[RMDB]
RNA sequence: GGGAACGACUCGAGUAGAGUCGAAAAUUGCCGAUCGGUAUGGAGGCCACCGUGACGGCUCAAUCACACAAGUGCCAACGAUAACGAGGCGCUCGCUAUUGCUGCGUAACUGACGGCCUGACGGUCUAAAACAGAUUCGUGUUCGCACGAAUCUGAACAGGAGUACUUUGUUCGCAAAGUACUCCUGAAAAGAAACAACAACAACAAC
Reactivity to 2A3 in 0.01 (KOAc 150mM, MgCl2 10mM, bicine 150mM(pH8.5), 24C), signal-to-noise 4, nucleotides 027 to 156: u130u080g040c010c020g060a080u040c040g010g030u130a090u180g080g060a010g000g020c020c020a020c020c000g040u030g080a090c040g020g010c040u070c100a070a100u110c010a020c020a020c020a150a040g010u000g050c000c010a060a030c060g050a070u080a130a070c050g010a060g120g040c050g020c070u040c020g000c000u010a060u130u160g020c030u020g000c010g030u020a070a060c030u040g050a020c060g020g000c000c000u020g040a050c070g040g000u020c050u160a070a050a040a050c010a000g000a000u000u000c000g000u010g010u050u060c180g010c060a010c010g000a000a000u000c000u000g000a020a000
Reactivity to DMS in 0.01 (KOAc 150mM, MgCl2 10mM, bicine 150mM(pH8.5), 24C), signal-to-noise 1, nucleotides 027 to 156: u000u000g030c010c020g050a130u000c040g030g020u000a070u000g030g040a120g020g020c000c060a040c060c050g020u000g000a170c080g000g030c050u000c090a090a070u010c040a100c070a070c060a060a040g050u010g000c000c000a000a110c040g010a060u000a050a090c040g010a210g020g010c130g060c020u000c020g000c000u010a050u000u000g000c010u000g000c040g000u000a060a080c040u000g000a120c100g020g000c020c000u010g000a080c100g030g000u010c030u010a060a050a080a210c000a000g000a010u000u000c000g030u000g000u000u010c300g020c000a000c020g000a020a000u000c000u000g010a030a160